[RMDB]
RNA sequence: GGGAACGACUCGAGUAGAGUCGAAAAUGCAGGUGCGUUUACUGCCGCCGAGAGAUGGUACGGAAUCACGCAGUUCUCGAAUGGGCUCGCAGUCCAGCGUCACAUCAUCAGCGGGAUCCGUUCCGCCAGGGAAUAUGCAGUUCGCUGCAUAUUCCCUAAAAGAAACAACAACAACAAC
Reactivity to 2A3 in 0.01 (KOAc 150mM, MgCl2 10mM, bicine 150mM(pH8.5), 24C), signal-to-noise 2, nucleotides 027 to 126: u080g000c010a030g000g160u050g070c050g020u100u120u050a060c050u090g030c000c010g000c000c010g080a100g020a000g010a130u150g010g020u000a020c000g000g010a080a130u030c020a030c070g000c020a020g030u070u040c000u030c050g080a160a130u090g000g010g020c010u020c140g040c100a010g000u050c030c010a030g010c000g080u060c020a020c000a130u110c000a040u070c030a010g000c010g000g020g000a000u000c000c020g020u030u030c010c010g000c000c050
Reactivity to DMS in 0.01 (KOAc 150mM, MgCl2 10mM, bicine 150mM(pH8.5), 24C), signal-to-noise 3, nucleotides 027 to 126: u000g000c020a120g000g010u010g000c080g000u000u000u000a070c090u010g000c020c090g000c030c040g010a130g000a120g020a080u010g020g020u000a060c040g000g000a060a060u000c070a070c050g020c040a090g000u000u000c090u000c040g020a100a120u010g020g000g000c010u000c210g040c130a160g030u000c070c070a040g040c060g000u000c070a040c100a070u010c030a060u010c130a150g000c010g000g000g020a040u000c070c010g010u000u000c010c010g000c140c090